Conditions: 150 mM KOAc, 10 mM MgCl2 and 150 mM bicine (pH 8.5), 24 C. This 177-nucleotide RNA was probed chemically with 2A3 and DMS. For DMS the reverse transcriptase was MarathonRT. The data come from the RNA Mapping Database (RMDB), library TTRDEL. The 2A3 profile rests on 2,561 reads.
[RMDB]
RNA sequence: GGGAACGACUCGAGUAGAGUCGAAAAGAUAUGGACCAUGACAUGAAAUCCACUCGGAAACGAGUGAUUUCAACAGCAUGUGUCCUAAGUCAAAACCGAAAGGUAGGCUUCGGCCUACCUUUCGGAAGUUAGUGUGUGUCUUCGGACACACACUAACAAAAGAAACAACAACAACAAC
Reactivity to 2A3 in 0.01 (KOAc 150mM, MgCl2 10mM, bicine 150mM(pH8.5), 24C), signal-to-noise 2, nucleotides 027 to 126: g060a010u100a020u110g000g000a020c010c000a000u010g180a250c070a110u070g000a050a020a000u080c180c060a020c010u010c010g080g000a110a070a070c020g000a000g010u000g000a000u000u010u000c010a030a010c040a010g110c010a000u030g260u210g020u100c000c010u000a120a010g070u030c030a030a030a130a220c010c010g010a000a000a000g000g010u010a010g020g000c040u140u180c300g000g000c000c000u000a030c000c030u000u000u000c000g020g000a010a000
Reactivity to DMS in 0.01 (KOAc 150mM, MgCl2 10mM, bicine 150mM(pH8.5), 24C), signal-to-noise 2, nucleotides 027 to 126: g030a040u010a280u010g020g010a020c000c000a020u010g000a070c040a260u000g000a010a010a010u010c140c090a010c010u020c000g010g020a110a070a230c000g000a020g010u000g000a070u000u010u020c010a040a060c290a160g020c030a020u010g000u010g000u000c000c000u010a020a100g020u030c060a050a050a180a150c030c010g010a000a020a000g000g000u020a010g000g000c020u000u000c230g020g000c000c000u010a010c000c000u000u000u000c000g000g000a000a020